RNA sequence: GGGAACGACUCGAGUAGAGUCGAAAAAAGCGGGACGUGACACUCUCCCCCACCAAAACAAGGUGUACGUCCUCGUACACGGCUUCCCCAUGCGGCACGCACUCCCACAACGCACCACAAUGCCAAUCAAUAGCUGAAGGUUCGCCUUCAGCUAUUGAAAAGAAACAACAACAACAAC
Reactivity to DMS in 0.01 (KOAc 150mM, MgCl2 10mM, bicine 150mM(pH8.5), 24C), signal-to-noise 1, nucleotides 027 to 126: a110a080g040c050g000g000g020a040c050g020u020g010a000c050a020c070u020c080u080c050c000c000c010c040a160c160c170a010a010a060a060c190a110a050g010g020u000g000u000a000c000g000u000c020c070u000c000g020u000a040c070a070c050g000g000c000u000u000c000c020c010c080a120u020g000c040g020g030c030a020c070g000c040a050c090u000c020c010c030a120c140a060a030c120g000c000a080c070c010a000c070a050a250u000g030c050c070a050a150u000
Overview: An RNA of 177 nucleotides, treated with DMS and read out base by base. High DMS reactivity at an A or C suggests that its Watson-Crick edge is free. For DMS the reverse transcriptase was MarathonRT. The DMS profile rests on 575 reads. Conditions: 150 mM KOAc, 10 mM MgCl2 and 150 mM bicine (pH 8.5), 24 C.